[RMDB]
RNA sequence: GGGAACGACUCGAGUAGAGUCGAAAAUAAGUCUAGUUCGCUAGACUUACUAUCGGGAAAACAGCCACCCGGCUCGAUCAGGCGGAUUCCGUCCAAGCGCUGCAACACACGUAUUCGUACGUGUGAAACGGCGAAUACGGUUCGCCGUAUUCGCCGUAAAAGAAACAACAACAACAAC
Reactivity to DMS in 0.01 (KOAc 150mM, MgCl2 10mM, bicine 150mM(pH8.5), 24C), signal-to-noise 1, nucleotides 027 to 126: u000a000a020g010u000c000u000a000g020u020u000c260g020c010u000a010g030a030c000u000u000a000c040u010a150u030c020g000g000g010a080a080a050a180c110a050g000c020c050a090c040c030c030g000g000c030u000c050g000a070u010c150a020g000g000c000g020g010a160u000u020c040c010g010u000c030c160a040a130g000c110g020c050u000g020c080a150a210c030a010c000a010c010g000u000a020u000u030c130g000u000a010c000g000u010g010u000g010a010a050
Reactivity to 2A3 in 0.01 (KOAc 150mM, MgCl2 10mM, bicine 150mM(pH8.5), 24C), signal-to-noise 1, nucleotides 027 to 126: u010a000a000g010u020c010u000a000g000u030u040c190g010c110u000a000g020a000c000u010u000a010c000u010a020u120c040g030g020g000a000a050a000a070c010a000g070c000c010a010c020c010c000g010g000c020u010c030g030a090u100c010a050g050g010c100g050g050a230u260u050c050c050g010u050c050c020a010a010g040c050g000c090u060g020c070a110a030c000a020c000a000c000g000u010a010u050u100c190g060u060a000c000g020u010g000u000g000a030a040